[RMDB]
RNA sequence: GGGAACGACUCGAGUAGAGUCGAAAAGAUGGGUCCGAUGGAUUAAUGCGUCGCCAGCCAUUGGAUCCUGAUUGAUAGAUUGAAGGCGACGGUCGGAUCACUCGGUAAUUCGGUGCUCGACGAGUGAUCCGUGAUGAUAGUUAAGAGGAGCACCUAACGUAGCGUCAGGAUUCGUCCUGACGCUACGAAAAGAAACAACAACAACAAC
Reactivity to 2A3 in 0.01 (KOAc 150mM, MgCl2 10mM, bicine 150mM(pH8.5), 24C), signal-to-noise 1, nucleotides 027 to 156: g060a040u160g000g000g020u000c000c000g000a000u010g050g020a000u220u110a080a040u300g070c000g000u000c000g010c040c000a000g000c000c000a000u000u000g000g000a000u020c000c010u010g020a020u000u150g010a020u000a030g060a060u060u270g130a190a130g000g000c000g000a000c000g000g000u060c010g000g000a020u030c000a000c000u000c000g000g240u290a040a270u160u300c090g000g000u000g000c000u020c000g060a070c030g000a000g000u000g000a000u000c000c000g040u000g010a050u010g000a050u060a090g150u220u120a070a010g010a050g190g000a000g000c000a000c000c000u030a070a000
Record summary
Conditions: 150 mM KOAc, 10 mM MgCl2 and 150 mM bicine (pH 8.5), 24 C. This 207-nucleotide RNA was probed chemically with 2A3. For 2A3, 462 sequencing reads were counted. Reactivities are given for positions 27 through 156.